An RNA of 177 nucleotides, treated with DMS and 2A3 and read out base by base.
RNA sequence: GGGAACGACUCGAGUAGAGUCGAAAAUGUAUGACACUCGUACCUGAUCAGAUUACAACAUGCAUAUGGAAGAACUGUGAUGAUAUAGCAUACAGGAUGUCAGAGCUGUGUGAUAAGAUCAUUGAAGCUGUAGCUUUUCAUUCGUGAAAAGCUACAGAAAAGAAACAACAACAACAAC
Reactivity to DMS in 0.01 (KOAc 150mM, MgCl2 10mM, bicine 150mM(pH8.5), 24C), signal-to-noise 4, nucleotides 027 to 126: u010g010u000a060u000g020a150c110a080c110u000c080g020u000a040c040c060u000g000a050u000c030a060g000a070u010u000a050c040a050a070c060a010u010g030c060a050u010a120u000g010g010a060a090g000a080a170c030u010g010u000g010a020u000g000a130u010a080u000a120g000c020a030u000a010c020a000g000g010a110u020g010u000c030a060g030a120g020c000u000g000u000g010u000g000a040u000a030a030g010a070u010c010a040u000u000g000a070a110g000
Reactivity to 2A3 in 0.01 (KOAc 150mM, MgCl2 10mM, bicine 150mM(pH8.5), 24C), signal-to-noise 4, nucleotides 027 to 126: u080g030u010a070u130g090a050c010a000c130u060c040g020u050a060c000c030u030g020a030u030c010a030g030a100u020u030a030c090a300a020c000a090u190g020c020a040u110a050u200g070g020a040a080g040a130a070c010u040g040u080g090a030u030g020a010u060a020u080a230g120c000a000u010a040c000a000g050g020a100u160g050u080c030a000g010a030g120c010u010g020u000g000u000g030a020u010a030a040g030a030u020c020a030u020u140g100a070a020g070